[RMDB]
RNA sequence: GGGAACGACUCGAGUAGAGUCGAAAAUAACAUCAGUCAGACAACCGAACACAAAUGGCAAGAGGAAGUAUUGAUCUUCAGGCUUUUGGAAGAUUCCAGGCUACCACAGUAGCUGCAGCCCUCCUCUUAAUGUGGCCAGAAUUUAUUUCAAGAAGAGAAUCUCCUUGGUAUUCGUACCAAGGAGAUUAAAAGAAACAACAACAACAAC
Reactivity to 2A3 in 0.01 (KOAc 150mM, MgCl2 10mM, bicine 150mM(pH8.5), 24C), signal-to-noise 1, nucleotides 027 to 156: u110a000a020c010a020u100c070a090g140u100c070a030g040a050c010a010a040c050c020g090a120a020c140a000c000a040a110a000u070g010g000c000a030a000g000a000g000g000a070a000g010u040a070u060u140g060a020u020c010u070u020c020a020g080g060c070u100u020u230u280g030g000a040a060g060a060u090u030c030c050a040g010g000c000u010a000c000c070a110c030a050g000u010a000g010c040u070g020c090a060g010c020c000c000u030c000c020u000c000u060u050a120a150u140g010u040g120g010c020c000a000g080a020a010u180u170u070a110u020u060u210c060a040a050g010a030a010g000a030g000
Reactivity to DMS in 0.01 (KOAc 150mM, MgCl2 10mM, bicine 150mM(pH8.5), 24C), signal-to-noise 2, nucleotides 027 to 156: u010a060a110c070a050u010c090a060g030u010c030a090g000a070c020a130a180c050c050g000a030a100c060a100c040a060a070a150u000g020g010c040a080a040g000a060g020g010a050a040g010u000a150u010u000g020a100u000c050u000u000c010a150g020g030c200u000u030u000u010g000g010a030a020g020a070u000u000c090c040a180g020g020c000u000a000c000c060a120c090a100g010u000a030g020c010u000g000c060a130g000c100c010c000u020c010c010u000c010u000u000a050a100u040g020u000g030g000c030c020a180g000a070a050u010u000u000a060u040u000u000c030a070a100g020a150a060g010a190g000